RNA sequence: GGGAACGACUCGAGUAGAGUCGAAAAACAUAUUGUGACAUAUUCGAACCAGCCAAGUUGACUAGAUACGGGAAGGACUACAAAGCAUGCGGGUAUCAAGACAGUCACGGGUUUUACAGGUCUGUCCCCUGAUACGCAAGUUCGCUUGCGUAUCAGGAAAAGAAACAACAACAACAAC
Reactivity to 2A3 in 0.01 (KOAc 150mM, MgCl2 10mM, bicine 150mM(pH8.5), 24C), signal-to-noise 2, nucleotides 027 to 126: a010c050a040u230a140u160u180g040u060g030a010c010a010u150a070u100u080c050g020a060a030c040c030a010g050c030c020a140a000g000u050u010g030a060c010u000a040g040a100u110a090c040g100g000g050a050a040g070g010a000c000u100a040c120a030a120a000g080c040a000u150g000c040g010g050g040u030a050u130c010a030a040g080a100c090a050g000u030c010a010c000g040g010g030u030u090u020u040a040c010a020g020g040u000c020u020g060u030c000c000
Reactivity to DMS in 0.01 (KOAc 150mM, MgCl2 10mM, bicine 150mM(pH8.5), 24C), signal-to-noise 2, nucleotides 027 to 126: a080c060a100u000a090u000u000g050u020g010a070c040a070u000a140u010u010c060g010a100a110c060c020a070g010c040c060a040a110g040u000u000g000a200c090u050a120g030a060u000a090c060g030g000g040a090a080g000g000a070c090u000a070c130a040a060a060g020c020a040u000g010c040g020g020g010u000a100u000c040a090a110g000a090c080a050g000u000c060a020c040g000g000g000u000u000u000u000a060c080a070g000g010u010c050u010g000u000c020c030

Chemical mapping of a 177-nucleotide RNA with 2A3 and DMS. Values are in units of 0.01, from 0 to 300, in steps of 10. The DMS profile rests on 1,687 reads. Conditions: 150 mM KOAc, 10 mM MgCl2 and 150 mM bicine (pH 8.5), 24 C. The data come from the RNA Mapping Database (RMDB), library OK2TRN.